Conditions: 150 mM KOAc, 10 mM MgCl2 and 150 mM bicine (pH 8.5), 24 C. The record gives the reactivity of an RNA of 177 nucleotides to 2A3 and DMS. For DMS the reverse transcriptase was MarathonRT. For 2A3, 2,622 sequencing reads were counted. High DMS reactivity at an A or C suggests that its Watson-Crick edge is free.
RNA sequence: GGGAACGACUCGAGUAGAGUCGAAAAGAUAUGGAUCCAGGCGAGCCGAUAAGCUAAGUAUCGGAAACGAUACAUAGCUUUUGACGGCUCGCUGGAUCCUAAGUCAAAAUCGGGCUUCGGCCCGAAACCAUGUUCUGACGUUCGCGUCAGAACAUGGAAAAGAAACAACAACAACAAC
Reactivity to 2A3 in 0.01 (KOAc 150mM, MgCl2 10mM, bicine 150mM(pH8.5), 24C), signal-to-noise 2, nucleotides 027 to 126: g000a010u050a020u080g000g000a000u000c030c010a030g300g300c020g000a010g020c000c160g300a130u150a300a010g020c000u010a070a030g000u000a010u030c000g030g000a000a040a000c000g000a010u000a020c010a030u020a010g010c000u020u070u060u080g190a170c210g000g020c010u000c000g000c010u000g000g000a000u010c000c000u000a000a000g000u000c020a020a000a010a290u030c000g030g010g010c020u080u090c300g170g000c010c110c000g000a000a000a000
Reactivity to DMS in 0.01 (KOAc 150mM, MgCl2 10mM, bicine 150mM(pH8.5), 24C), signal-to-noise 1, nucleotides 027 to 126: g030a000u000a300u020g000g000a000u000c000c000a000g000g000c030g000a020g000c000c000g040a270u000a030a000g030c010u010a020a050g000u000a000u020c010g010g020a080a040a090c000g000a020u000a010c000a140u000a000g010c000u000u000u000u000g010a150c280g000g040c000u000c000g010c000u000g000g000a000u000c000c000u000a000a050g000u000c000a100a050a100a200u000c000g000g020g090c000u010u030c280g010g000c000c000c000g000a000a030a090